[RMDB]
RNA sequence: GGGAACGACUCGAGUAGAGUCGAAAAUACAACUGGGCCAUCAUAGGUCGUGAUGCCUUACAACAAUGCCAAGGCGUCCUGUACCUCCCUGAGGCAAAAAGGCCGCCUGUAAUCUUGCCAAUACAGGGGAUCCUAAUUACUUCGGUAAUUAGGAUCCAAAAGAAACAACAACAACAAC
Reactivity to DMS in 0.01 (KOAc 150mM, MgCl2 10mM, bicine 150mM(pH8.5), 24C), signal-to-noise 4, nucleotides 027 to 126: u020a050c170a110a070c140u000g000g000g010c030c000a140u010c080a040u040a020g010g000u030c030g010u000g010a020u010g010c000c000u020u000a210c090a090a190c300a130a130u100g010c110c120a020a020g010g000c000g020u010c010c000u000g000u030a040c010c020u000c000c010c020u000g000a060g000g040c060a030a040a030a140a030g010g010c000c010g020c000c010u010g000u020a020a040u000c040u010u000g010c030c030a130a110u000a020c040a030g000g000
Reactivity to 2A3 in 0.01 (KOAc 150mM, MgCl2 10mM, bicine 150mM(pH8.5), 24C), signal-to-noise 6, nucleotides 027 to 126: u210a030c050a060a030c080u120g010g030g020c020c010a090u030c010a020u090a120g000g020u020c020g040u080g000a000u000g000c010c000u030u040a020c050a210a030c060a210a110u220g140c180c040a020a000g000g000c000g000u010c010c000u080g040u120a030c000c000u020c010c000c010u030g010a030g040g020c030a040a050a040a020a010g020g000c010c020g020c020c000u010g000u020a020a060u030c050u050u070g020c010c020a030a030u030a050c010a030g040g000
Structure probing data (DMS and 2A3) for a 177-nucleotide construct. Reactivities are rounded to 0.1 and cut off at 0 and 3. Values cover nucleotides 27 to 126. The reactions ran in a buffer of 150 mM KOAc, 10 mM MgCl2 and 150 mM bicine (pH 8.5), at 24 C.